Structure probing data (DMS and 2A3) for a 177-nucleotide construct. The 2A3 profile rests on 5,581 reads.
[RMDB]
RNA sequence: GGGAACGACUCGAGUAGAGUCGAAAAUAAUAAUAGGAUUCAGGAGAAUCAAACAUGUAACGCGCGAAGCUUUGUCUUUUUUUUCCCUUCCUGAUUCUGAAACGACUAACGGUUGCGCGCUAAAUAACGAUCUUUAAUGAUUCGUCAUUAAAGAUCGAAAAGAAACAACAACAACAAC
Reactivity to DMS in 0.01 (KOAc 150mM, MgCl2 10mM, bicine 150mM(pH8.5), 24C), signal-to-noise 5, nucleotides 027 to 126: u000a090a090u010a110a130u020a170g010g000a030u000u010c010a020g010g010a110g000a100a070u010c160a110a090a120c150a070u010g000u000a060a060c100g010c010g010c020g010a100a090g000c040u000u000u000g000u000c000u000u000u010u000u020u000u000u000c000c000c010u000u000c000c000u000g000a020u000u000c010u000g010a040a030a080c170g000a030c030u010a040a060c130g000g000u000u000g010c000g000c010g020c020u000a040a070a110u010a060a160
Reactivity to 2A3 in 0.01 (KOAc 150mM, MgCl2 10mM, bicine 150mM(pH8.5), 24C), signal-to-noise 2, nucleotides 027 to 126: u040a010a020u100a080a060u090a130g040g010a020u080u010c010a010g010g070a070g050a060a110u120c100a170a150a070c050a030u220g040u220a090a010c050g010c000g010c020g030a010a010g030c020u070u060u080g000u030c020u080u060u050u030u030u010u020u020c010c000c000u020u020c010c000u010g010a000u010u000c010u030g050a060a040a010c050g030a010c010u050a130a020c100g050g000u020u060g000c010g000c000g010c020u060a070a080a090u110a110a020